Overview
The data come from the RNA Mapping Database (RMDB), library OK1LIB. The record gives the reactivity of an RNA of 177 nucleotides to DMS and 2A3. DMS adducts were read by reverse transcription with MarathonRT.
[RMDB]
RNA sequence: GGGAACGACUCGAGUAGAGUCGAAAAGAAGGAGUUGGCGGACGGAUGUGGCCGAGGUAUGAACGUUGGAAGGCGCUUCCGUGUGAGCGGAAUUCUUUCAUACCAAGAACGGGAUAACCGGAAGAAAGGGAUAAUCAUUCUUCGGAAUGAUUAUCCCAAAAGAAACAACAACAACAAC
Reactivity to DMS in 0.01 (KOAc 150mM, MgCl2 10mM, bicine 150mM(pH8.5), 24C), signal-to-noise 2, nucleotides 027 to 126: g000a100a020g000g000a090g000u010u010g000g000c030g020g010a160c060g000g020a030u030g020u040g050g020c020c030g000a060g030g000u030a110u010g000a090a090c270g020u020u030g010g030a100a200g050g000c050g000c150u010u000c000c040g050u000g000u140g010a190g000c020g010g020a110a040u000u000c030u000u010u000c000a020u000a040c030c010a130a070g010a150a070c000g000g030g000a200u000a030a090c010c020g000g000a090a100g010a080a080a060
Reactivity to 2A3 in 0.01 (KOAc 150mM, MgCl2 10mM, bicine 150mM(pH8.5), 24C), signal-to-noise 1, nucleotides 027 to 126: g030a070a020g010g000a100g000u080u000g000g090c110g000g020a000c000g060g010a090u030g070u010g040g020c010c010g000a000g000g000u090a030u100g070a060a020c040g030u010u010g120g010a010a000g000g030c000g000c070u090u050c000c070g040u090g030u020g020a070g000c000g000g040a000a030u020u010c000u040u030u000c040a000u000a010c000c000a000a000g120a100a030c150g000g000g000a000u030a160a060c030c000g000g010a000a050g010a010a040a000
The DMS profile rests on 1,783 reads. The RNA was probed in 150 mM KOAc, 10 mM MgCl2 and 150 mM bicine (pH 8.5) at 24 C. Reactivities are given for positions 27 through 126.